The record gives the reactivity of an RNA of 177 nucleotides to DMS and 2A3. High 2A3 reactivity points to a flexible backbone, as in loops and unpaired stretches. The DMS profile rests on 1,501 reads.

RNA sequence: GGGAACGACUCGAGUAGAGUCGAAAACGAAUUUGAGUACCUUAUCAACCAUCCUGACAUAUGGUUUACAGAUGAGUGGGCCAAUGCAAAGAUGACAUGGCUGCAGUUGAAGCAGAUGACUCGGUUCCGUCUCUCCAAAGUUCGCUUUGGAGAGACGAAAAGAAACAACAACAACAAC
Reactivity to DMS in 0.01 (KOAc 150mM, MgCl2 10mM, bicine 150mM(pH8.5), 24C), signal-to-noise 2, nucleotides 027 to 126: c130g000a050a030u000u000u020g020a100g040u000a110c120c100u010u000a070u000c100a080a040c080c010a020u010c070c090u000g030a150c110a070u000a080u000g010g010u000u000u010a040c110a080g010a070u010g000a100g030u000g010g020g000c000c010a030a030u000g040c090a070a070a080g000a070u000g000a110c050a080u000g020g010c060u000g000c040a060g010u000u010g000a050a090g030c030a050g030a100u000g000a050c030u000c010g030g000u000u000c060
Reactivity to 2A3 in 0.01 (KOAc 150mM, MgCl2 10mM, bicine 150mM(pH8.5), 24C), signal-to-noise 2, nucleotides 027 to 126: c020g010a030a030u070u070u300g040a060g020u070a090c020c030u070u110a110u090c020a010a040c010c000a000u050c010c030u150g100a080c020a040u200a090u070g040g000u000u020u060a050c020a030g130a190u090g080a180g100u000g030g030g000c000c000a010a000u050g000c000a060a090a030g070a040u050g020a020c020a060u040g030g000c030u060g000c010a030g010u150u080g060a110a020g000c030a000g020a110u090g020a030c000u020c000g010g030u060u000c040